[RMDB]
The data come from the RNA Mapping Database (RMDB), library OK1LIB. This 177-nucleotide RNA was probed chemically with 2A3 and DMS. 2A3 adducts were read by reverse transcription with SuperScript II with manganese. DMS adducts were read by reverse transcription with MarathonRT. For 2A3, 3,562 sequencing reads were counted.
RNA sequence: GGGAACGACUCGAGUAGAGUCGAAAAUCUGUCAACCCCUCCCGCCAUGGAAACCUUGAGAGCCGACGAAGCUACAGAACUUUCUGGCUCCCAGAGAGCUUUUGCCUAUGCCCUCAAUGGAAAAGGCUGCUCACUUUUAUUUCGAUAAAAGUGAGCAAAAAGAAACAACAACAACAAC
Reactivity to 2A3 in 0.01 (KOAc 150mM, MgCl2 10mM, bicine 150mM(pH8.5), 24C), signal-to-noise 5, nucleotides 027 to 126: u030c010u040g110u070c020a050a160c010c000c000c000u010c000c000c000g040c010c000a010u070g010g030a060a080a090c020c000u070u030g090a080g020a010g150c010c020g020a100c070g050a070a010g030c010u100a070c050a110g090a170a050c010u040u050u030c030u070g050g010c030u040c010c020c020a050g070a010g000a000g020c010u040u040u060u060g010c000c000u060a100u170g050c000c010c010u080c040a080a130u130g050g000a060a090a030a030g060g000c030
Reactivity to DMS in 0.01 (KOAc 150mM, MgCl2 10mM, bicine 150mM(pH8.5), 24C), signal-to-noise 3, nucleotides 027 to 126: u040c020u030g010u030c070a150a170c080c000c010c010u000c030c070c040g030c040c030a040u010g010g000a070a040a070c050c030u010u000g010a080g000a050g010c030c120g030a140c150g020a110a040g000c030u000a120c130a100g010a080a140c050u000u000u000c040u000g010g010c060u000c100c060c040a100g000a070g000a040g000c080u000u000u000u000g000c010c010u000a120u040g000c020c020c000u000c070a070a090u040g000g000a050a100a170a080g010g000c020